This 177-nucleotide RNA was probed chemically with 2A3 and DMS. Source: RMDB library TTRDES, as collected in RNAgym. For 2A3 the reverse transcriptase was SuperScript II with manganese. DMS adducts were read by reverse transcription with MarathonRT. The DMS profile rests on 8,956 reads.
RNA sequence: GGGAACGACUCGAGUAGAGUCGAAAAAAAGAUAUGGAGUGUGAACUACUCGGACCGCUCGUCAACAGCUUAGCUCGGAAACGAGCUAAGACAUGACGAGUUAGUACGAGCACACUCCUAAGUCAAACAUCUCUAAAAUGUUCGCAUUUUAGAGAUGAAAAGAAACAACAACAACAAC
Reactivity to 2A3 in 0.01 (KOAc 150mM, MgCl2 10mM, bicine 150mM(pH8.5), 24C), signal-to-noise 4, nucleotides 027 to 126: a000a000a000g080a050u080a060u130g000g000a000g010u020g030u010g020a070a100c070u190a050c000u300c010g000g000a010c010c000g020c020u000c010g010u010c010a080a080c030a220g050c010u010u000a000g000c000u000c010g040g000a050a070a060c010g000a000g000c000u000a000a000g000a030c010a080u090g000a000c000g000a000g000u010u000a000g000u000a000c000g000a010g000c000a000c000a000c000u000c000c000u000a010a000g000u010c010a010a090a060
Reactivity to DMS in 0.01 (KOAc 150mM, MgCl2 10mM, bicine 150mM(pH8.5), 24C), signal-to-noise 7, nucleotides 027 to 126: a070a060a080g000a040u000a300u010g000g000a020g010u000g010u000g010a070a040c090u010a300c010u010c000g010g000a060c180c230g000c000u000c010g010u000c010a020a090c300a200g000c000u000u000a000g010c010u000c000g010g000a110a100a200c000g000a000g000c000u000a000a000g010a020c090a170u010g000a010c000g020a020g010u000u000a030g020u000a080c020g000a020g000c010a010c000a010c000u000c000c000u000a010a070g010u000c030a120a100a250